[RMDB]
RNA sequence: GGGAACGACUCGAGUAGAGUCGAAAAGAAUAAUUACUUUCAAGAAGAUUUUUAAAUCUUCAUAGCUGCGAUGGGAUUUGAACCCAUGAUGAGACUAACUCCACGAAUCCUAAGUCCGCUGCAUUAGACCGAUGAUUUUAUUCGUAAAAUCAUCGGUAAAAGAAACAACAACAACAAC
Reactivity to 2A3 in 0.01 (KOAc 150mM, MgCl2 10mM, bicine 150mM(pH8.5), 24C), signal-to-noise 6, nucleotides 027 to 126: g030a000a050u180a140a050u170u180a110c060u130u220u220c120a090a050g030a020a010g000a020u030u020u030u140u300a170a220a030u000c000u000u000c010a020u070a030g030c050u040g030c030g040a040u020g020g000g020a040u050u060u200g080a100a070c010c010c020a020u050g050a090u040g020a010g020a020c040u110a160a020c000u010c030c000a040c020g020a020a020u030c000c000u030a080a040g090u030c050c010g030c020u020g000c010a100u050u080a050g090
Reactivity to DMS in 0.01 (KOAc 150mM, MgCl2 10mM, bicine 150mM(pH8.5), 24C), signal-to-noise 3, nucleotides 027 to 126: g010a190a060u030a050a130u020u030a070c090u020u010u000c060a100a140g010a020a010g020a000u000u000u040u040u050a040a050a070u000c010u000u000c010a100u000a080g020c030u000g030c120g010a080u030g000g030g000a060u010u010u010g010a090a110c000c040c000a040u020g000a090u010g000a070g010a090c090u020a060a070c020u020c050c090a130c060g000a080a060u010c060c010u000a080a110g010u010c040c020g040c040u000g000c040a090u020u030a040g010